[RMDB]
RNA sequence: GGGAACGACUCGAGUAGAGUCGAAAAUCGAUAGUUCGCUAUCGAAAAAAUCCUAAGUCCUCGAUGAGGCUGCCAUCAGGCGAAGAACUGUCGGAAACGACAGGGAGCCUGUUGGCAGCCGAGAGGAUAUGGAAAAAAACUCCGGUUCGCCGGAGAAGUAUUAUGAAAACUUCGGUUUUCAUAAUACAAAAGAAACAACAACAACAAC
Reactivity to DMS in 0.01 (KOAc 150mM, MgCl2 10mM, bicine 150mM(pH8.5), 24C), signal-to-noise 1, nucleotides 027 to 156: u000c000g020a000u000a010g010u000u010c240g020c020u000a010u000c010g020a000a000a070a100a170a130u000c010c020u000a120a220g040u020c000c000u000c000g060a170u040g010a140g010g040c000u000g010c000c000a000u000c020a030g000g020c010g000a100a130g000a070a110c000u000g010u000c000g000g020a210a110a300c030g010a000c000a030g000g020g000a300g000c000c010u000g000u010u000g000g010c020a010g000c000c000g000a010g010a030g020g050a010u000a030u010g000g020a000a000a100a100a200a160a070c010u000c000c000g030g000u000u000c300g020c010c000g000g000a010g010a010a070
Reactivity to 2A3 in 0.01 (KOAc 150mM, MgCl2 10mM, bicine 150mM(pH8.5), 24C), signal-to-noise 1, nucleotides 027 to 156: u000c000g000a000u000a000g080u070u020c130g000c100u000a000u000c000g030a050a020a000a020a000a020u060c010c010u030a080a040g020u010c010c000u040c040g200a300u090g060a070g020g000c000u000g020c000c000a020u020c000a000g000g000c000g080a140a000g040a020a010c000u000g000u010c000g010g060a130a020a040c000g000a000c000a000g010g000g020a000g000c000c000u000g000u000u000g000g000c010a000g020c010c000g010a000g000a000g000g000a000u000a000u000g010g060a020a060a020a040a100a000a040c000u170c210c010g010g050u040u020c240g020c020c010g000g000a000g000a010a020
The record gives the reactivity of an RNA of 207 nucleotides to DMS and 2A3. For 2A3 the reverse transcriptase was SuperScript II with manganese. In probing experiments dimethyl sulfate is read out at A N1 and C N3, which are open when not base-paired. It was measured as part of the RMDB library RNAMAK. The RNA was probed in 150 mM KOAc, 10 mM MgCl2 and 150 mM bicine (pH 8.5) at 24 C. For 2A3, 1,062 sequencing reads were counted. The DMS profile rests on 3,136 reads.